This 170-nucleotide RNA was probed chemically with DMS and 2A3.
RNA sequence: GGGAACGACUCGAGUAGAGUCGAAAAUGAAUCAGAGUGCAUUUCUGAGACUUCAACUGAACAAGUUGACGUUUCUCAUGAGACUUCUGACGACGAGUGGGCUGCUGCAGUUGAUGAAGCGUUCCCUAGGGUCCUGAGUUCGCUCAGGACAAAAGAAACAACAACAACAAC
Reactivity to DMS in 0.01 (KOAc 150mM, MgCl2 10mM, bicine 150mM(pH8.5), 24C), signal-to-noise 9, nucleotides 027 to 129: u020g010a180a120u030c000a010g030a080g050u040g040c130a130u010u020u040c050u000g020a000g020a030c010u020u000c030a000a000c010u010g000a130a090c230a120a020g010u010u020g000a020c060g030u000u040u020c050u000c080a070u000g020a060g020a020c000u000u060c020u000g000a040c070g010a130c180g000a070g020u050g000g010g010c050u020g020c020u030g000c030a060g040u020u020g020a090u030g010a050a070g020c050g000u000u010c010c010c010u040a140g000g020
Reactivity to 2A3 in 0.01 (KOAc 150mM, MgCl2 10mM, bicine 150mM(pH8.5), 24C), signal-to-noise 9, nucleotides 027 to 129: u130g050a010a040u020c010a010g020a010g160u080g070c110a140u050u080u000c010u030g000a000g000a000c000u000u000c000a000a000c000u040g070a090a040c110a240a030g000u000u000g000a000c000g020u020u170u030c010u000c000a040u230g020a010g020a040c010u070u020c000u070g010a010c030g030a020c040g000a020g060u130g000g070g010c020u150g010c010u010g000c070a070g020u100u080g060a150u090g050a070a010g030c000g010u010u010c000c010c010u030a070g140g040
2A3 adducts were read by reverse transcription with SuperScript II with manganese. It was measured as part of the RMDB library 15KLIB. The reactions ran in a buffer of 150 mM KOAc, 10 mM MgCl2 and 150 mM bicine (pH 8.5), at 24 C. Reactivities are given for positions 27 through 129. The DMS profile rests on 51,080 reads.